Source information
Chemical mapping of a 207-nucleotide RNA with 2A3 and DMS. For DMS, 3,324 sequencing reads were counted. For 2A3, 1,569 sequencing reads were counted. The data come from the RNA Mapping Database (RMDB), library OK3TST.
RNA sequence: GGGAACGACUCGAGUAGAGUCGAAAACUCUGUCCACGGCGAUGUGGUGCGUGGAGCCGGUCGUGGCGGCAAAGAACUCGGUUUUCCAACUGCCAACCUUUAUUUUCCUGAUAGUAUCGCGUUGCCAGAAGACGGUGUCUAUGCAGGUUGGCUCACAGAUUAUGGUACGAUUCGUCGUACCAUAAUCAAAAGAAACAACAACAACAAC
Reactivity to 2A3 in 0.01 (KOAc 150mM, MgCl2 10mM, bicine 150mM(pH8.5), 24C), signal-to-noise 3, nucleotides 027 to 156: c010u010c050u050g090u040c010c020a040c040g020g010c000g030a090u120g090u150g080g010u090g000c040g040u080g070g070a040g030c050c020g030g020u040c050g050u090g020g020c030g020g000c010a050a080a050g010a080a030c030u060c190g080g000u030u070u090u000c040c030a090a070c080u050g030c000c000a000a000c000c000u100u230u070a180u100u220u180u050c030c030u060g040a050u040a120g010u050a030u050c050g010c030g160u060u060g030c030c050a070g060a100a030g000a060c020g060g000u000g030u040c050u090a010u070g120c090a000g000g000u010u010g010g080c050u040c030a060c010a020
Reactivity to DMS in 0.01 (KOAc 150mM, MgCl2 10mM, bicine 150mM(pH8.5), 24C), signal-to-noise 1, nucleotides 027 to 156: c020u000c050u000g000u000c010c010a070c080g000g010c000g040a060u000g000u020g040g040u010g010c070g060u010g010g000a150g000c090c010g070g030u010c040g050u020g000g160c000g020g000c030a030a080a090g020a070a090c040u000c100g020g010u000u010u000u020c020c030a120a140c060u000g000c000c000a050a010c010c010u000u000u000a090u030u020u000u000c030c030u000g020a110u000a060g020u000a040u000c060g050c050g000u000u000g040c020c130a150g000a120a160g010a020c030g000g020u000g000u000c010u000a060u010g010c020a030g020g030u000u030g000g050c020u000c070a040c100a300